[RMDB]
RNA sequence: GGGAACGACUCGAGUAGAGUCGAAAAGAUAUGGACUAGGUAGGGAGGCUGGUCGGAAACGACUGGCCGACGAUCUACUAGUCCUAAGUCAAAGGUCACAGACGUGGUUCGCCACGUCUGUGACCAACGUAUCGAUAUAGUUCGCUAUAUCGAUACGAAAAGAAACAACAACAACAAC
Reactivity to 2A3 in 0.01 (KOAc 150mM, MgCl2 10mM, bicine 150mM(pH8.5), 24C), signal-to-noise 3, nucleotides 027 to 126: g030a000u080a050u160g030g000a010c000u010a020g150g220u070a000g020g170g010a010g010g000c010u000g010g020u020c010g010g010a090a060a030c000g010a000c010u010g030g040c030c000g000a010c000g000a000u000c000u000a000c000u010a000g010u000c000c010u010a100a010g020u000c040a070a080a180g020g000u010c010a010c010a000g000a010c020g010u030g000g070u100u130c300g060c080c000a000c000g000u010c000u000g000u000g000a000c000c010a000a000
Reactivity to DMS in 0.01 (KOAc 150mM, MgCl2 10mM, bicine 150mM(pH8.5), 24C), signal-to-noise 4, nucleotides 027 to 126: g010a040u000a300u010g000g000a010c000u000a020g010g020u010a010g000g000g000a030g020g020c000u010g010g010u000c000g010g000a090a070a180c000g010a000c000u000g000g010c000c000g000a020c200g000a030u010c000u000a020c000u000a010g000u000c000c000u000a010a060g010u010c050a090a100a130g010g000u000c000a000c000a000g000a010c010g000u000g010g000u000u010c250g010c000c000a010c000g000u000c000u000g000u000g000a000c000c000a000a030